[RMDB]
RNA sequence: GGGAACGACUCGAGUAGAGUCGAAAAUUGCUCAUAAUUAAAGCGUUUUUAUGGCGAAUGUUCACGCGGUAAAUUCUUCCGGUUUUUAUGUUUUUGAAGUAGGUCAUAAUUUAACCUCAUGAUACUCUAUAAACUCUUGCACAUAUGCGCAUUCGCGCAGUCGAAUGUGUUUCGACACAUUCGACUGAAAAGAAACAACAACAACAAC
Reactivity to DMS in 0.01 (KOAc 150mM, MgCl2 10mM, bicine 150mM(pH8.5), 24C), signal-to-noise 1, nucleotides 027 to 156: u000u000g020c010u000c050a170u000a130a160u000u000a090a130a110g020c150g030u000u000u020u000u020a090u040g030g000c000g020a090a030u010g000u000u000c040a070c020g000c000g020g030u020a070a050a180u010u010c060u000u010c050c060g030g030u000u000u000u000u000a080u010g000u010u010u010u010u010g020a090a130g000u000a060g040g030u000c020a050u000a040a100u020u000u020a010a040c040c060u010c040a100u000g000a160u000a070c020u000c050u000a110u010a110a050a060c040u000c050u000u000g010c090a130c060a110u000a040u040g000c030g010c000a130u000u000c020g050c000g010
Reactivity to 2A3 in 0.01 (KOAc 150mM, MgCl2 10mM, bicine 150mM(pH8.5), 24C), signal-to-noise 3, nucleotides 027 to 156: u090u090g000c000u020c040a090u100a270a120u260u130a180a110a080g010c040g020u050u040u010u060u190a100u060g050g000c020g000a040a010u020g010u070u080c050a010c070g120c040g000g040u050a120a130a160u190u030c040u130u070c040c030g020g040u020u090u020u010u070a070u080g030u000u050u030u130u110g030a050a020g010u110a050g000g020u030c020a020u030a220a020u100u080u070a040a040c000c000u040c050a040u030g020a030u060a070c010u000c040u090a040u120a170a090a030c030u020c070u170u130g020c050a050c010a070u250a060u230g000c040g000c010a030u060u050c040g000c010g000

This 207-nucleotide RNA was probed chemically with DMS and 2A3. For 2A3 the reverse transcriptase was SuperScript II with manganese. The 2A3 profile rests on 1,414 reads. The reactions ran in a buffer of 150 mM KOAc, 10 mM MgCl2 and 150 mM bicine (pH 8.5), at 24 C. Source: RMDB library OK3TST, as collected in RNAgym.